The record gives the reactivity of an RNA of 207 nucleotides to 2A3.
For 2A3, 758 sequencing reads were counted.
2A3 adducts were read by reverse transcription with SuperScript II with manganese.
Conditions: 150 mM KOAc, 10 mM MgCl2 and 150 mM bicine (pH 8.5), 24 C.
Reactivities are given for positions 27 through 156.
Source: RMDB library RNAMAK, as collected in RNAgym.
[RMDB]
RNA sequence: GGGAACGACUCGAGUAGAGUCGAAAAGCGUACUACCUUGGCAACGUGAGCGAAGAACUGAAAGCACAUCGCUCCCAAAUAGGAGCGAUAGCUUUCAGGGAGCUCACGAGCCAAGGUAUCGCAAACGCAACAUAGAUCUUCGGAUCUAUGUUGCGAAGAAAGGACCUGUGUUCGCACAGGUCCUUUCAAAAGAAACAACAACAACAAC
Reactivity to 2A3 in 0.01 (KOAc 150mM, MgCl2 10mM, bicine 150mM(pH8.5), 24C), signal-to-noise 1, nucleotides 027 to 156: g030c020g100u120a100c010u020a020c020c000u000u000g000g000c150a300a040c300g010u000g000a010g030c000g130a300a000g000a030a000c000u000g000a000a000a000g000c050a070c050a300u000c000g020c000u030c000c000c000a190a300a220u300a100g000g000a000g000c050g000a000u000a000g010c000u000u000u000c000a000g000g000g000a000g000c000u020c000a000c010g000a000g000c010c000a000a000g010g000u020a000u000c010g000c000a100a030a000c000g000c000a020a010c000a000u000a000g000a000u000c000u050u070c270g150g000a000u020c000u030a000u000g000u000u000g000c000g000a010a000